[RMDB]
An RNA of 207 nucleotides, treated with 2A3 and DMS and read out base by base. Values cover nucleotides 27 to 156. The data come from the RNA Mapping Database (RMDB), library OK3TST. The DMS profile rests on 2,197 reads.
RNA sequence: GGGAACGACUCGAGUAGAGUCGAAAAACGCUCACAACGUGGUGCCCUGUUGGAUAGCAUCUUUUAAACAAGAGUACACCGCCCGAACAUUCAGAUCAAAAAUCAAUCGCGUGCUUGAUCAGUAUCUAAAACCUUUUCCGCCUGUGCUUGAACACAACCUCAUUUAGCAUUUCGAUGCUAAAUGAGGAAAAGAAACAACAACAACAAC
Reactivity to 2A3 in 0.01 (KOAc 150mM, MgCl2 10mM, bicine 150mM(pH8.5), 24C), signal-to-noise 3, nucleotides 027 to 156: a010c050g030c010u080c010a090c040a060a130c060g050u050g010g020u030g020c090c020c000u050g070u070u130g050g010a050u060a080g050c020a070u040c010u070u140u060u230a110a140a060c070a090a020g010a020g000u030a010c030a020c020c020g000c020c010c010g060a050a020c010a040u130u200c060a060g040a060u050c080a080a110a060a040a030u080c050a050a050u080c050g040c040g090u050g020c020u020u010g000a030u050c010a020g020u050a080u060c110u090a010a030a070a120c020c020u050u030u060u050c010c070g020c030c030u030g020u020g030c020u070u120g050a120a020c050a000c030a070a040
Reactivity to DMS in 0.01 (KOAc 150mM, MgCl2 10mM, bicine 150mM(pH8.5), 24C), signal-to-noise 1, nucleotides 027 to 156: a020c030g020c030u000c300a120c030a030a070c040g050u020g010g030u000g000c120c060c000u000g020u000u000g010g000a100u000a160g000c050a220u000c050u000u000u000u000a020a080a190c070a040a120g020a130g010u010a110c020a090c000c030g010c030c060c010g000a020a050c050a120u000u010c090a080g000a060u000c020a020a040a070a110a120u000c100a030a040u010c060g040c070g020u000g020c060u000u000g060a040u000c030a170g020u000a030u000c060u030a000a060a080a080c050c030u000u000u000u000c000c060g010c070c000u000g020u000g010c040u000u010g020a080a060c030a040c070a030a230